Structure probing data (DMS and 2A3) for a 177-nucleotide construct. Values cover nucleotides 27 to 126. The reactions ran in a buffer of 150 mM KOAc, 10 mM MgCl2 and 150 mM bicine (pH 8.5), at 24 C.
RNA sequence: GGGAACGACUCGAGUAGAGUCGAAAAGGGAUUUGCCGCCGCGACUGACAACUUCUUUUUGUUGUUUGAAUGCCAGGUCAUCAUCUGUGAAGACCCGAGGUAAGCAAACCAGCACAGGCGCGUCCAGCUCUAUACCCUCGUUCGCGAGGGUAUAGAGAAAAGAAACAACAACAACAAC
Reactivity to DMS in 0.01 (KOAc 150mM, MgCl2 10mM, bicine 150mM(pH8.5), 24C), signal-to-noise 4, nucleotides 027 to 126: g000g020g000a120u020u040u010g020c040c030g050c050c050g010c100g000a220c020u010g010a100c160a050a080c120u010u040c110u030u000u020u010u010g000u000u000g010u000u000u000g000a060a060u010g020c020c030a110g010g000u000c020a050u000c010a120u020c140u050g000u030g000a030a050g010a070c000c000c050g000a090g000g010u010a050a060g020c050a030a040a050c150c000a030g010c050a100c070a110g000g000c010g020c040g000u000c040c020a130g010
Reactivity to 2A3 in 0.01 (KOAc 150mM, MgCl2 10mM, bicine 150mM(pH8.5), 24C), signal-to-noise 8, nucleotides 027 to 126: g080g020g010a090u080u090u240g080c070c040g020c000c000g060c070g070a090c030u050g050a020c030a090a040c070u200u150c080u190u280u080u110u170g040u030u020g010u020u010u030g050a080a020u050g000c010c000a000g000g010u010c010a020u010c000a030u040c090u180g220u120g120a090a020g000a030c020c010c040g060a100g000g020u050a050a040g050c010a010a020a050c030c030a010g010c030a040c020a080g020g010c000g000c000g010u000c000c000a020g020